[RMDB]
RNA sequence: GGGAACGACUCGAGUAGAGUCGAAAAGUGCAGGCCGGCACUGUACCCGAGAUUGAGGCGUUUUUGGGUACAUGUUUGGGUACACCGCUACGAGCACGGUGCUUCUGACCUGCGGUUUUACGGUGGAUUGCACCGGAAUCGGCUGAUUAAAAGUUCGGAUCAGCAGUAGUUUCGACUACUGCUGAUCAAAAGAAACAACAACAACAAC
Reactivity to 2A3 in 0.01 (KOAc 150mM, MgCl2 10mM, bicine 150mM(pH8.5), 24C), signal-to-noise 2, nucleotides 027 to 156: g060u090g000c000a010g080g040c030c030g040g000c000a000c200u000g000u000a020c000c000c050g020a030g010a000u160u250g060a090g090g100c040g000u040u000u000u070u150g010g000g000u000a000c000a040u010g070u090u100u190g070g000g000u060a000c030a030c010c010g000c040u060a050c040g020a000g020c020a000c060g000g010u030g000c000u040u040c040u080g220a080c000c000u020g010c010g040g000u140u080u000u040a040c030g000g000u030g000g160a300u150u190g050c000a000c010c000g000g000a010a050u020c010g010g000c040u100g050a110u030u210a100a130a000a020g110u120u140c040g020